[RMDB]
Background: An RNA of 207 nucleotides, treated with 2A3 and read out base by base. The RNA was probed in 150 mM KOAc, 10 mM MgCl2 and 150 mM bicine (pH 8.5) at 24 C.

RNA sequence: GGGAACGACUCGAGUAGAGUCGAAAAAUUUCAUCAAAUCUUUCGCAAUUUCACCAACGUCCACGAAUGGAAUGUUUUGUGCUUUUUUUUUUGAAUGAUUUGAAGAGGAAUAUCACAAGAAAAGUCACAUAGGAAGGAAUCGAGUAUAGGUGGUACACUCAGUGAUCCCAUUCGUGGGAUCACUGAGAAAAGAAACAACAACAACAAC
Reactivity to 2A3 in 0.01 (KOAc 150mM, MgCl2 10mM, bicine 150mM(pH8.5), 24C), signal-to-noise 1, nucleotides 027 to 156: a000u090u060u080c080a020u040c020a090a000a050u000c010u040u080u010c070g080c090a080a050u010u090u150c040a060c020c000a020a010c010g000u000c020c040a060c190g110a180a100u120g010g010a070a070u010g000u000u100u040u000g000u020g040c070u010u210u100u020u080u040u020u000u060u110g040a080a000u020g020a030u000u030u000g100a120a050g010a030g020g020a000a020u040a050u120c020a000c000a110a050g110a050a110a000a010g090u140c010a020c010a100u030a040g000g000a010a030g030g030a040a040u090c020g010a020g000u030a110u100a070g000g070u060g000g020u130a030c000a000

Annotation
For 2A3 the reverse transcriptase was SuperScript II with manganese. Source: RMDB library OK3TST, as collected in RNAgym.